[RMDB]
RNA sequence: GGGAACGACUCGAGUAGAGUCGAAAAGUAAAUUCAGUAACCCUCCUAUGACGUAAAUGGUACGCUACUAACGAAUAAUAAAGUCAAAGGGCGUAGUUAUAGGGUAUGCCGGAUGAAUAAUCCAAUCGGAUAGUAAACUCUUCGGAGUUUACUAUCCAAAAGAAACAACAACAACAAC
Reactivity to DMS in 0.01 (KOAc 150mM, MgCl2 10mM, bicine 150mM(pH8.5), 24C), signal-to-noise 2, nucleotides 027 to 126: g010u010a030a180a040u010u010c060a050g030u020a140a240c060c040c050u020c060c060u000a010u000g010a010c050g000u010a080a060a070u000g040g020u000a010c010g000c010u000a010c020u000a030a030c010g000a140a090u020a150a120u010a140a120a140g020u000c000a010a040a040g000g000g000c020g000u010a020g000u000u000a040u000a040g010g000g010u000a030u000g020c110c090g000g000a040u000g010a090a090u000a140a120u000c030c010a090a140u010c210
Reactivity to 2A3 in 0.01 (KOAc 150mM, MgCl2 10mM, bicine 150mM(pH8.5), 24C), signal-to-noise 2, nucleotides 027 to 126: g030u080a030a070a130u260u140c050a010g080u050a110a110c030c000c010u010c000c020u020a020u020g020a000c030g060u030a000a110a110u140g170g040u080a000c010g030c020u040a010c000u000a040a030c050g040a000a000u230a150a030u090a110a060a010g000u010c000a070a300a020g020g000g000c000g000u000a020g000u010u030a010u000a020g010g050g020u040a060u090g130c090c070g000g000a020u010g020a070a080u130a110a030u010c020c000a010a020u100c070